[RMDB]
RNA sequence: GGGAACGACUCGAGUAGAGUCGAAAAAAUGUUGAGGUGGUUAACUAUUUAAUGCUGCUAUGUUGGAUGGCUUUACUAUGCUGGAAUCAAACCUCACUUACCAUUGAUAGUUAAUUUAUCUGGACGACAUCCUUCCGGAGUUCGCUCCGGAAGGAUGAAAAGAAACAACAACAACAAC
Reactivity to DMS in 0.01 (KOAc 150mM, MgCl2 10mM, bicine 150mM(pH8.5), 24C), signal-to-noise 1, nucleotides 027 to 126: a110a050u020g010u020u000g000a000g050g030u000g000g000u000u000a000a010c020u000a010u000u000u000a010a010u010g010c300u010g020c140u000a010u000g010u000u000g020g010a080u010g040g000c060u000u000u000a140c140u000a060u040g010c140u000g030g040a100a090u000c100a050a060a060c010c010u000c090a010c020u000u000a060c170c010a030u000u000g000a010u000a000g000u000u000a010a010u010u000u010a000u000c010u000g000g010a130c020g010a180
Structure probing data (DMS) for a 177-nucleotide construct.
It was measured as part of the RMDB library OK2TRN.